RNA sequence: GGGAACGACUCGAGUAGAGUCGAAAAGACCGCAGAAGCGGAAACGGCGAAAACGUGCGGAAGAAUACGCACGAGCGGAAGCCUGGAUAGCGACCGAGAGGUCGCAACGCCGAAUGAUCCAGAAGAAAGUAUUACCCAUGUUCGCAUGGGUAAUACUAAAAGAAACAACAACAACAAC
Reactivity to DMS in 0.01 (KOAc 150mM, MgCl2 10mM, bicine 150mM(pH8.5), 24C), signal-to-noise 3, nucleotides 027 to 126: g070a130c010c000g060c010a120g010a180a140g030c000g000g000a050a060a130c040g000g000c000g000a140a080a090a170c000g010u010g020c000g000g000a120a140g030a170a130u110a120c030g000c000a000c010g000a080g010c060g010g030a110a030g000c050c010u000g000g010a050u010a130g020c000g000a030c000c000g000a150g010a260g000g040u000c000g030c000a010a010c080g000c010c020g020a040a050u030g000a040u000c000c000a070g010a160a100g000a130a120
Reactivity to 2A3 in 0.01 (KOAc 150mM, MgCl2 10mM, bicine 150mM(pH8.5), 24C), signal-to-noise 5, nucleotides 027 to 126: g020a020c000c010g000c020a100g070a300a070g040c050g020g020a050a050a020c020g020g000c020g020a040a040a030a090c020g020u010g000c000g030g030a100a090g100a170a120u300a080c010g000c000a000c000g010a000g030c060g060g060a030a010g040c000c000u030g000g000a010u040a070g000c000g010a000c000c000g090a080g010a010g040g000u000c000g000c000a000a000c020g010c010c000g000a030a050u220g040a010u020c020c010a000g040a090a000g060a060a280